[RMDB]
RNA sequence: GGGAACGACUCGAGUAGAGUCGAAAAGCUUAGAAGCAGCCACCCCUUCAAAGAGUGCGUAACAGCUCACUGGUCGAGUGGACAUGCGCCGACAAUACACGGGGCUAAGCUCUGAACCGAAGCGGCGUCUUCCAACGUCAUUCGUGACGUUGGAAGAAAAAGAAACAACAACAACAAC
Reactivity to 2A3 in 0.01 (KOAc 150mM, MgCl2 10mM, bicine 150mM(pH8.5), 24C), signal-to-noise 4, nucleotides 027 to 126: g060c000u030u040a020g040a150a000g070c050a010g030c000c000a030c000c000c000c000u050u120c070a030a110a080g100a040g040u170g000c030g040u080a120a090c050a120g000c000u000c010a030c030u080g020g110u140c040g060a030g030u030g040g060a050c050a130u080g020c020g010c000c030g030a090c050a050a040u150a070c070a020c140g010g000g020g000c000u040a050a010g000c000u030c050u090g060a050a000c000c020g010a060a000g040c030g040g000c000g000
Reactivity to DMS in 0.01 (KOAc 150mM, MgCl2 10mM, bicine 150mM(pH8.5), 24C), signal-to-noise 3, nucleotides 027 to 126: g000c010u010u040a040g010a160a040g000c040a050g030c030c010a290c030c000c020c030u010u040c080a100a080a140g010a060g040u000g030c000g000u000a040a100c110a120g000c020u000c010a090c010u000g010g050u020c150g000a070g010u000g000g000a060c050a160u000g030c020g060c000c010g010a080c120a020a120u040a110c250a060c170g000g000g010g000c000u000a090a060g000c050u000c050u020g000a090a110c040c000g010a110a120g000c080g000g000c040g000

This 177-nucleotide RNA was probed chemically with 2A3 and DMS.
For 2A3 the reverse transcriptase was SuperScript II with manganese.
For 2A3, 2,976 sequencing reads were counted.